This 207-nucleotide RNA was probed chemically with DMS and 2A3. For 2A3 the reverse transcriptase was SuperScript II with manganese. DMS adducts were read by reverse transcription with MarathonRT. For DMS, 13,978 sequencing reads were counted. For 2A3, 11,536 sequencing reads were counted.
RNA sequence: GGGAACGACUCGAGUAGAGUCGAAAAAGGAAAUUCUGACACACACUACAAUGUGGAUGAAACUUGAGGACAUUGUACCAAGUGAAAUAAGCCAGACACAAAAAGACAACAACUCUAUGAUUUCACUUACGUGAGGUACAUAGUGUAGUCAAAUUGAACAUAUCUGAUUGUUCGCAAUCAGAUAUGUAAAAGAAACAACAACAACAAC
Reactivity to DMS in 0.01 (KOAc 150mM, MgCl2 10mM, bicine 150mM(pH8.5), 24C), signal-to-noise 5, nucleotides 027 to 156: a110g010g000a090a050a100u010u000c040u000g010a240c030a160c040a100c040a070c030u000a120c120a080a060u010g000u000g020g000a170u000g000a110a070a050c070u000u010g010a110g010g000a080c040a060u010u000g020u000a050c060c030a060a120g020u010g010a070a070a060u000a090a110g030c010c030a050g010a110c130a100c050a040a060a090a070a110g000a100c040a080a070c050a090a080c040u000c010u010a030u000g010a080u000u010u000c010a020c010u000u010a110c250g020u010g000a040g010g010u000a060c010a030u000a040g000u000g010u000a080g020u000c020a030a040a150u010u000g000a140
Reactivity to 2A3 in 0.01 (KOAc 150mM, MgCl2 10mM, bicine 150mM(pH8.5), 24C), signal-to-noise 9, nucleotides 027 to 156: a010g140g010a050a080a030u120u030c050u090g080a020c010a000c000a000c010a010c100u160a040c080a060a090u090g000u040g020g050a060u100g050a060a080a060c060u070u100g030a070g040g040a020c020a050u060u120g010u030a030c020c030a070a030g020u020g080a040a050a090u090a070a000g040c040c010a020g030a050c020a010c020a100a090a030a040a010g030a020c030a090a000c010a040a030c070u000c000u040a020u010g010a020u020u020u010c010a010c020u110u240a050c140g030u020g010a010g000g010u030a080c000a010u020a010g020u010g030u020a040g010u010c020a030a070a120u070u120g020a020